This 207-nucleotide RNA was probed chemically with 2A3 and DMS. It was measured as part of the RMDB library OK3TST. Reactivities are given for positions 27 through 156. For DMS, 3,609 sequencing reads were counted.
RNA sequence: GGGAACGACUCGAGUAGAGUCGAAAAUGCAUGCAUACGCAUGAAGCCACCAUGCAGUUAUGAUCAGAACGGAAAUGUGUGAGACACCAUGCACCCCACAGUGGCAGCACCAAAUAGUAGAGGCAGGGGGUGCUCUAGCCACCCCUAACCCGUGUCACCACUAAAAUAGGUUCGCCUAUUUUAGUGGAAAAGAAACAACAACAACAAC
Reactivity to 2A3 in 0.01 (KOAc 150mM, MgCl2 10mM, bicine 150mM(pH8.5), 24C), signal-to-noise 4, nucleotides 027 to 156: u070g000c000a000u020g010c000a000u000a030c020g020c010a000u020g040a060a030g010c000c000a000c000c000a010u010g000c030a040g040u250u070a090u030g030a040u090c070a090g140a250a050c060g120g080a110a170a100u080g020u000g010u060g090a070g020a040c020a000c020c000a020u020g000c000a080c020c000c000c010a030c030a020g010u030g050g000c030a000g040c030a040c070c060a070a040a130u150a090g100u050a040g020a140g070g000c080a080g060g000g000g010g020u000g000c000u030c030u020a010g000c020c020a010c000c000c010c000u020a060a030c020c010c030g060u050g040u050c050a020
Reactivity to DMS in 0.01 (KOAc 150mM, MgCl2 10mM, bicine 150mM(pH8.5), 24C), signal-to-noise 3, nucleotides 027 to 156: u000g000c000a060u010g040c080a060u000a080c110g010c020a110u000g000a120a190g000c040c020a110c080c030a030u010g000c030a140g000u000u000a120u010g030a090u000c100a140g010a140a170c070g030g030a100a060a120u000g010u000g040u000g010a260g030a270c060a070c020c010a030u000g000c040a050c080c000c000c020a100c080a040g000u000g010g040c000a120g000c050a130c050c030a030a060a100u000a110g010u000a110g010a130g010g020c020a300g020g050g010g000g000u000g020c010u000c070u010a110g000c100c010a030c010c000c010c000u000a040a030c010c020c000g010u010g010u000c070a130

2A3 is a SHAPE reagent: it acylates the 2'-hydroxyl of flexible nucleotides of all four kinds. The 2A3 profile rests on 3,426 reads. Conditions: 150 mM KOAc, 10 mM MgCl2 and 150 mM bicine (pH 8.5), 24 C.